Annotation
An RNA of 207 nucleotides, treated with DMS and 2A3 and read out base by base. The data come from the RNA Mapping Database (RMDB), library OK3TST. The reactions ran in a buffer of 150 mM KOAc, 10 mM MgCl2 and 150 mM bicine (pH 8.5), at 24 C. The 2A3 profile rests on 666 reads. The DMS profile rests on 3,928 reads.
RNA sequence: GGGAACGACUCGAGUAGAGUCGAAAAUUAGGGGCCGUAGCCCAGGUCGUGGUGUGCGAUAAGGCUGGAGAAGUCAGCUGAGCCAGACUGUGAAGGCCUUUGUAUGUCCUGCUUUCAAGUUUGGACUCAGUCCUGCAGUCAGUGGGGAGCCGACCAAAUUAUACCCCGUAUUCGUACGGGGUAUAAUAAAAGAAACAACAACAACAAC
Reactivity to DMS in 0.01 (KOAc 150mM, MgCl2 10mM, bicine 150mM(pH8.5), 24C), signal-to-noise 2, nucleotides 027 to 156: u010u000a120g010g010g020g060c050c060g020u000a110g020c010c030c010a060g060g030u000c020g030u000g000g020u000g020u010g020c010g020a190u010a070a090g000g040c010u010g010g000a110g010a090a150g020u010c050a100g020c000u000g010a050g030c020c000a040g000a030c010u010g010u010g020a040a050g010g000c000c050u010u010u000g010u020a140u000g010u000c020c050u000g010c010u000u010u000c010a050a050g010u000u010u030g010g020a100c010u000c040a060g000u000c080c050u000g010c020a060g030u000c020a120g020u000g010g000g000g030a140g040c040c040g020a090c020c010a040a120
Reactivity to 2A3 in 0.01 (KOAc 150mM, MgCl2 10mM, bicine 150mM(pH8.5), 24C), signal-to-noise 2, nucleotides 027 to 156: u160u050a060g000g010g030g010c080c030g040u060a010g020c010c010c020a010g020g000u030c030g040u030g040g070u060g020u060g070c040g010a050u050a180a070g000g020c010u020g010g000a030g010a010a050g060u200c140a000g010c010u000g000a000g000c000c000a010g040a000c000u010g060u020g300a010a000g030g030c010c030u090u060u140g120u170a230u100g130u120c010c080u050g000c010u010u060u000c000a020a010g010u010u050u080g110g030a270c010u000c000a010g050u070c000c000u030g020c000a060g030u080c000a050g050u090g020g010g000g010a000g030c000c000g000a040c000c040a050a040